Source information
An RNA of 177 nucleotides, treated with 2A3 and DMS and read out base by base. For 2A3, 927 sequencing reads were counted. The RNA was probed in 150 mM KOAc, 10 mM MgCl2 and 150 mM bicine (pH 8.5) at 24 C.

RNA sequence: GGGAACGACUCGAGUAGAGUCGAAAAUUGGUACAGCUAGCUGGGAGAGGCAAGUGACUUGUCUAAGGUCACACAGCUGGUGAGCAGCAGAGCGUGGGUUCAGACCCAGGUGGAGCUGGCUGCUAGCCCCCACUGUGUGCUUCGGCACACAGUGGGGAAAAGAAACAACAACAACAAC
Reactivity to 2A3 in 0.01 (KOAc 150mM, MgCl2 10mM, bicine 150mM(pH8.5), 24C), signal-to-noise 2, nucleotides 027 to 126: u030u040g010g000u060a020c000a050g000c010u040a030g010c000u040g040g150g100a050g000a050g100g000c030a080a070g000u040g020a010c010u010u030g070u140c100u230a040a010g060g000u030c000a000c000a000c000a000g000c040u000g000g000u150g060a000g000c000a000g000c000a000g060a000g220c070g050u020g010g010g010u060u170c040a050g110a100c020c000c000a000g150g210u190g050g000a110g000c070u010g090g000c000u000g000c000u000a060g000c000
Reactivity to DMS in 0.01 (KOAc 150mM, MgCl2 10mM, bicine 150mM(pH8.5), 24C), signal-to-noise 1, nucleotides 027 to 126: u040u050g000g030u000a160c080a260g000c040u000a000g000c080u010g010g000g000a170g000a110g000g000c050a190a040g030u000g000a070c030u000u000g000u070c300u040a040a070g000g010u000c040a000c020a230c090a080g010c010u020g000g010u040g000a010g020c020a030g000c050a010g010a120g030c000g000u090g000g000g000u000u000c230a080g060a080c080c000c060a010g000g050u010g000g010a190g000c000u000g000g110c010u000g010c010u000a120g000c070